The record gives the reactivity of an RNA of 177 nucleotides to 2A3 and DMS.
For DMS the reverse transcriptase was MarathonRT.
It was measured as part of the RMDB library M2PK50.
RNA sequence: GGGAACGACUCGAGUAGAGUCGAAAAUGCCAGGGGUUCGCCCCUGGCACAUUACCGAGAAAGCAGCUCGGUAUAAAACUGCAAGCCUUGGAAACAAGGGAAACUUUGACACAUUCGUGUGUCAAAACUUAAUUUCAGAGUUCGCUCUGAAAUUAAGAAAAGAAACAACAACAACAAC
Reactivity to 2A3 in 0.01 (KOAc 150mM, MgCl2 10mM, bicine 150mM(pH8.5), 24C), signal-to-noise 1, nucleotides 027 to 126: u030g000c000c000a000g000g020g010g010u030u060c110g100c020c000c000c000u010g000g030c000a000c000a000u000u020a030c000c010g000a000g030a000a180a020g010c010a000g010c000u010c030g010g000u000a010u000a000a010a010a010c020u030g020c040a080a030g120c000c000u010u000g020g010a060a020a010c000a000a020g000g000g000a050a090a000c050u000u020u000g010a000c010a000c000a020u050u180c190g090u040g000u000g000u040c000a000a000a000a000
Reactivity to DMS in 0.01 (KOAc 150mM, MgCl2 10mM, bicine 150mM(pH8.5), 24C), signal-to-noise 2, nucleotides 027 to 126: u000g000c000c000a010g000g000g020g020u000u000c220g000c010c000c000c020u000g000g000c000a000c050a030u010u000a290c000c000g010a010g000a060a060a130g010c060a020g000c010u000c000g000g010u000a030u000a010a010a020a040c050u000g020c040a130a180g000c000c000u010u000g000g000a190a100a220c000a000a000g000g000g000a030a060a110c200u000u000u000g000a010c010a010c000a050u000u010c200g020u000g000u000g000u000c000a000a010a000a150